[RMDB]
Conditions: 150 mM KOAc, 10 mM MgCl2 and 150 mM bicine (pH 8.5), 24 C. The record gives the reactivity of an RNA of 177 nucleotides to DMS and 2A3. For 2A3, 1,347 sequencing reads were counted. For DMS the reverse transcriptase was MarathonRT. Source: RMDB library RFMREP, as collected in RNAgym. As a SHAPE reagent, 2A3 marks flexible, mostly unpaired nucleotides at the ribose 2'-OH.
RNA sequence: GGGAACGACUCGAGUAGAGUCGAAAACACUUUUAAUCAUGAGAAAGAAAUUACCCACAUGGAGUCAGCAGAAAAUGAGAAAGUAGAGCUCGUGCUGCGAAUAAUUCCAGCAAGUGCCAAGGGGCUACCCAUAAGCUAUGUUCGCAUAGCUUAUGGGAAAAGAAACAACAACAACAAC
Reactivity to DMS in 0.01 (KOAc 150mM, MgCl2 10mM, bicine 150mM(pH8.5), 24C), signal-to-noise 2, nucleotides 027 to 126: c120a090c030u000u000u010u000a090a150u000c140a050u000g000a260g000a020a090a030g000a110a060a070u000u010a090c040c020c010a070c190a110u010g000g000a030g040u010c070a090g000c010a030g010a050a060a060a070u000g000a050g000a020a040a100g000u000a050g000a190g020c010u000c020g000u010g000c010u000g000c090g010a070a170u020a050a100u010u010c010c010a050g020c160a050a050g000u000g000c030c060a040a140g030g000g000g010c170u000a120
Reactivity to 2A3 in 0.01 (KOAc 150mM, MgCl2 10mM, bicine 150mM(pH8.5), 24C), signal-to-noise 2, nucleotides 027 to 126: c010a000c010u050u050u070u130a110a090u200c080a090u160g120a050g080a160a020a000g080a020a140a050u100u070a130c010c000c000a010c030a080u030g010g010a000g040u070c030a030g000c000a000g010a080a180a050a080u060g000a040g010a070a230a050g060u110a040g020a040g070c020u010c040g000u020g030c000u010g000c020g010a070a030u240a040a030u120u000c000c000a000g000c030a120a030g030u060g080c040c010a060a100g100g000g020g020c020u020a070